Chemical mapping of a 177-nucleotide RNA with DMS and 2A3. For DMS, 6,299 sequencing reads were counted. DMS adducts were read by reverse transcription with MarathonRT.
RNA sequence: GGGAACGACUCGAGUAGAGUCGAAAAGAUAUGGAGACCUCACGCAUCGAUCUCGAGUCGGAAACGACUCGAGGGGAGCGUGGGUCUCCUAAGUCAAAAGGACGUAGUUGUUCGCAACUACGUCCAACCCUUAUGUAAGCUUCGGCUUACAUAAGGGAAAAGAAACAACAACAACAAC
Reactivity to DMS in 0.01 (KOAc 150mM, MgCl2 10mM, bicine 150mM(pH8.5), 24C), signal-to-noise 4, nucleotides 027 to 126: g000a030u000a160u000g000g000a010g000a010c010c010u020c030a010c000g010c000a250u000c130g010a080u010c000u000c000g000a010g020u000c000g000g000a040a030a060c000g010a020c000u000c000g000a010g000g010g000g010a020g010c000g020u000g010g000g000u000c000u010c000c000u000a000a030g000u010c020a090a070a170a140g000g000a010c000g010u000a000g010u000u010g010u010u020c220g020c000a000a000c000u000a000c000g010u000c000c010a010a020
Reactivity to 2A3 in 0.01 (KOAc 150mM, MgCl2 10mM, bicine 150mM(pH8.5), 24C), signal-to-noise 5, nucleotides 027 to 126: g010a010u020a010u080g020g010a020g000a000c010c050u300c160a010c020g020c010a190u300c180g080a110u000c010u010c000g000a000g010u010c010g020g000a020a010a000c010g000a000c000u000c010g000a020g000g000g040g100a100g000c000g000u000g000g010g000u000c000u000c000c000u000a000a000g000u000c010a000a020a030a110g000g000a000c000g000u010a010g010u000u020g030u070u150c260g030c120a000a000c010u000a000c000g010u010c010c000a000a010